[RMDB]
RNA sequence: GGGAACGACUCGAGUAGAGUCGAAAAUUCAAAAGAGAACUGAAAGUGGCCACACAGUCGAAAUGCAGGUUGCAAAACCAGAAGUAACAAAUCCUUAUGAACAUGUCCUUGUUCGACUUGGAAGAGCGAUAACGGCAGGAUUCGUCCUGCCGUUAUCAAAAGAAACAACAACAACAAC
Reactivity to DMS in 0.01 (KOAc 150mM, MgCl2 10mM, bicine 150mM(pH8.5), 24C), signal-to-noise 3, nucleotides 027 to 126: u010u010c030a000a090a060a150g000a100g000a060a050c030u000g000a050a050a080g020u000g000g070c010c040a060c060a110c040a030g030u000c140g030a040a160a040u020g000c050a070g010g000u030u010g000c200a020a040a070a020c040c020a120g020a030a070g010u050a070a100c140a060a060a070u050c060c020u000u010a070u030g010a020a060c080a060u000g020u020c080c050u000u010g010u020u010c010g010a130c120u000u030g000g000a060a030g000a060g020c150
Reactivity to 2A3 in 0.01 (KOAc 150mM, MgCl2 10mM, bicine 150mM(pH8.5), 24C), signal-to-noise 3, nucleotides 027 to 126: u080u050c040a000a000a040a130g090a010g000a080a020c040u090g000a040a080a000g040u040g050g010c000c000a000c000a000c010a100g120u080c010g070a010a010a010u120g080c040a010g040g000u030u070g080c020a020a050a010a050c010c000a080g090a060a060g080u080a080a060c040a080a100a070u070c060c010u140u200a070u140g000a000a030c000a030u110g040u090c050c000u060u040g060u100u040c040g040a120c050u000u010g030g050a110a010g010a030g070c060